[RMDB]
This 207-nucleotide RNA was probed chemically with DMS and 2A3. Reactivities are rounded to 0.1 and cut off at 0 and 3. The reactions ran in a buffer of 150 mM KOAc, 10 mM MgCl2 and 150 mM bicine (pH 8.5), at 24 C. For DMS the reverse transcriptase was MarathonRT. It was measured as part of the RMDB library OK3TST.
RNA sequence: GGGAACGACUCGAGUAGAGUCGAAAAAAUAUAUGACAGAUGAAUGGGUAGUAUCAUACUGAAUAGGGAAAAAUGGAAAGCCUUUUUUCUAAGAUCAGAACACAACAAGGAUGCCCACUUUCACCACUGUUACUCAGUGUAAUACUGGAAGUCCUAAGUCGUAGUAAUUAUUCGUAAUUACUACGACAAAAGAAACAACAACAACAAC
Reactivity to DMS in 0.01 (KOAc 150mM, MgCl2 10mM, bicine 150mM(pH8.5), 24C), signal-to-noise 2, nucleotides 027 to 156: a080a080u030a080u000a050u000g030a070c010a180g030a120u000g010a110a030u000g010g000g040u000a050g000u010a090u000c030a100u000a160c030u010g010a040a050u000a260g040g000g010a030a010a020a070a020u010g020g000a070a120a210g000c010c010u010u000u010u000u000u000c010u020a010a100g010a290u000c020a070g000a110a110c100a120c080a070a080c110a080a060g010g000a120u000g020c020c000c010a040c090u000u000u000c020a090c060c040a070c090u000g000u000u000a060c120u000c120a050g030u000g010u010a040a090u000a060c060u010g010g000a050a170g010u000c020c000u010a060a300
Reactivity to 2A3 in 0.01 (KOAc 150mM, MgCl2 10mM, bicine 150mM(pH8.5), 24C), signal-to-noise 3, nucleotides 027 to 156: a000a000u270a010u040a040u090g030a010c010a020g090a070u040g010a060a030u030g000g030g010u020a110g030u060a090u130c030a060u060a120c020u020g030a060a030u030a110g000g000g030a010a000a020a010a020u080g020g040a180a140a300g080c000c000u040u020u000u010u020u010c040u060a070a050g050a180u040c020a000g090a160a020c050a020c010a230a070c050a120a020g130g000a040u050g000c000c000c000a020c030u000u030u030c030a020c050c000a060c010u020g040u030u050a040c050u040c070a020g000u000g020u150a130a100u090a160c010u020g010g070a040a010g080u020c010c000u100a120a040